Structure probing data (2A3 and DMS) for a 177-nucleotide construct. Values cover nucleotides 27 to 126. The RNA was probed in 150 mM KOAc, 10 mM MgCl2 and 150 mM bicine (pH 8.5) at 24 C.
RNA sequence: GGGAACGACUCGAGUAGAGUCGAAAAUUCUAAAAGCACUCAGAGUGAUAGGACAAAUAAUGUCAAAGCACUGAAGCAGACAUUAUUGAGGUCAAAGGUGUUGUAAUGACAGGAUAGGAUGCUUCAGGAAUAGCUGUGAUUUCGAUCACAGCUAUUCAAAAGAAACAACAACAACAAC
Reactivity to 2A3 in 0.01 (KOAc 150mM, MgCl2 10mM, bicine 150mM(pH8.5), 24C), signal-to-noise 2, nucleotides 027 to 126: u030u010c020u050a100a060a050a040g000c000a000c030u090c110a060g070a040g190u080g070a130u130a140g100g050a000c000a010a100a020u070a030a050u050g020u020c020a140a030a040g100c060a050c080u080g000a020a000g000c010a010g010a020c000a020u000u090a000u020u100g110a130g080g050u020c000a040a020a070g070g010u050g010u060u050g110u110a090a130u100g070a020c040a020g000g080a050u150a090g030g050a020u030g000c000u020u000c010a020g000
Reactivity to DMS in 0.01 (KOAc 150mM, MgCl2 10mM, bicine 150mM(pH8.5), 24C), signal-to-noise 4, nucleotides 027 to 126: u000u000c020u000a090a080a120a110g010c030a030c020u020c120a110g020a160g030u000g010a140u010a060g020g000a050c040a060a010a030u000a010a010u000g010u010c010a050a090a080g000c110a220c050u010g000a040a030g000c000a090g010a060c020a020u010u000a020u000u010g000a110g020g010u010c030a060a100a090g000g020u000g010u000u010g010u010a110a120u010g000a080c120a050g000g010a090u000a070g010g000a100u010g010c020u000u000c020a060g000